[RMDB]
RNA sequence: GGGAACGACUCGAGUAGAGUCGAAAAGAUAUGGACCUUGUAAGACAUGCUUGUUCGGAAACGAAUAAGCAACAGCUUAUGGGUCCUAAGUCAAACCCGCCUUUAGUGUUCGCACUAAAGGCGGGAACAUUCCUGUCAGGUUCGCCUGACAGGAAUGAAAAGAAACAACAACAACAAC
Reactivity to DMS in 0.01 (KOAc 150mM, MgCl2 10mM, bicine 150mM(pH8.5), 24C), signal-to-noise 3, nucleotides 027 to 126: g010a040u000a290u000g030g000a010c020c000u010u010g060u010a000a000g000a110c120a220u000g000c000u000u000g000u000u000c000g000g000a090a040a120c000g000a000a010u000a000a000g010c000a010a050c260a170g020c000u010u000a000u010g020g010g000u000c000c000u000a010a040g010u020c030a070a140a240c000c000c000g000c000c000u000u000u000a000g010u000g010u000u020c240g000c020a020c000u010a000a020a010g000g030c000g000g010g010a020a030